The data come from the RNA Mapping Database (RMDB), library RSTRND.
An RNA of 207 nucleotides, treated with 2A3 and read out base by base.
The reactions ran in a buffer of 150 mM KOAc, 10 mM MgCl2 and 150 mM bicine (pH 8.5), at 24 C.
High 2A3 reactivity points to a flexible backbone, as in loops and unpaired stretches.
[RMDB]
RNA sequence: GGGAACGACUCGAGUAGAGUCGAAAACAUGGACUGCGUUUCGCCAUCCGGGCGUUAAAACGGGCAGAAAUUUUAACUGCAAAAAACGAAAACUCUUUCGCAAUCGCUGCCUAAAAAACAGUGAUGCGUCACUUAAUCUUGGUAGCUGGCGUCUAAGCAACCAUGGUCUGUUCGCAGACCAUGGUUGAAAAGAAACAACAACAACAAC
Reactivity to 2A3 in 0.01 (KOAc 150mM, MgCl2 10mM, bicine 150mM(pH8.5), 24C), signal-to-noise 2, nucleotides 027 to 156: c030a080u060g000g050a030c070u100g040c050g030u060u120u170c010g000c000c000a000u070c010c000g040g000g000c010g000u010u020a030a110a010a000c030g040g040g000c020a020g140a120a160a060u150u190u060u080a160a070c030u000g000c020a110a050a050a000a060a030c110g040a080a110a080a070c070u070c030u030u100u030c010g040c060a160a100u040c040g020c020u010g030c000c020u060a030a040a000a000a000a010c040a000g010u000g010a010u030g000c010g000u000c010a020c010u120u100a110a080u140c050u040u040g000g000u000a010g020c030u000g030g040c030g000u040c020u030a040a020g010